[RMDB]
RNA sequence: GGGAACGACUCGAGUAGAGUCGAAAAGAUAUGGAUGAUACCAGACGAGGAUCUUAGGGAUCGGAAACGAUCCUAAGGGAGUCUGUGUAUCAUCCUAAGUCAAAACCCCGUGCUUCGGCACGGGGAAGAGGCCUAUUAAGUUCGCUUAAUAGGCCUCAAAAGAAACAACAACAACAAC
Reactivity to 2A3 in 0.01 (KOAc 150mM, MgCl2 10mM, bicine 150mM(pH8.5), 24C), signal-to-noise 1, nucleotides 027 to 126: g050a030u070a020u140g000g000a000u000g000a010u020a000c000c010a030g040a010c010g060a300g080g000a020u020c000u010u030a090g300g010g170a040u040c020g020g000a080a060a000c040g000a000u000c020c030u000a000a000g000g020g000a010g000u000c010u010g090u040g000u030a000u000c000a010u000c000c000u000a000a020g010u000c000a030a040a040a300c000c000c000c000g010u020g000c030u090u150c300g180g000c000a000c000g010g000g000g020a020a030
Reactivity to DMS in 0.01 (KOAc 150mM, MgCl2 10mM, bicine 150mM(pH8.5), 24C), signal-to-noise 1, nucleotides 027 to 126: g020a050u010a300u020g020g000a000u000g000a050u010a000c000c010a040g020a000c010g010a120g040g000a020u020c000u000u000a020g030g000g000a010u000c020g000g010a110a090a300c010g000a000u000c000c000u000a000a000g000g000g000a050g020u000c000u000g010u030g020u000a020u000c010a000u000c000c000u000a030a130g020u000c020a070a070a160a200c000c000c000c020g050u000g000c020u020u000c170g020g020c000a010c010g000g020g000g010a010a010